[RMDB]
RNA sequence: GGGAACGACUCGAGUAGAGUCGAAAAGGCAAUAGAGGAAAGACUCUUCUGGGUUAGGAAGUCAGAGGACAACAUGGAAUCGCUCGAUGACAACUGUUAUUCAGCACUGAUGGAGGCGUUCCACCACCAGUUGUACAAGAUUCGUCUUGUACAACUGAAAAGAAACAACAACAACAAC
Reactivity to 2A3 in 0.01 (KOAc 150mM, MgCl2 10mM, bicine 150mM(pH8.5), 24C), signal-to-noise 9, nucleotides 027 to 126: g080g000c050a060a130u100a160g080a060g060g120a130a090a030g040a050c020u010c000u090u000c020u040g100g000g000u060u060a050g020g050a050a030g040u030c020a010g010a020g050g020a020c020a080a020c020a160u180g080g090a090a080u080c070g030c110u030c060g120a110u070g010a020c010a080a080c070u040g050u150u050a090u070u090c020a010g020c050a030c100u100g020a090u140g090g010a010g000g010c010g000u010u000c010c020a050c010c010a040c010
Reactivity to DMS in 0.01 (KOAc 150mM, MgCl2 10mM, bicine 150mM(pH8.5), 24C), signal-to-noise 9, nucleotides 027 to 126: g010g010c070a080a100u010a070g010a070g010g000a080a080a130g000a080c040u000c030u000u000c040u000g010g010g000u000u000a130g010g000a060a210g010u000c030a030g020a160g000g000a040c070a040a070c120a090u010g010g010a080a070u000c080g010c060u000c090g010a130u000g010a050c050a060a190c080u000g000u010u000a060u000u000c060a040g010c190a100c100u000g010a090u000g010g010a050g000g000c020g010u000u000c010c010a070c140c100a080c190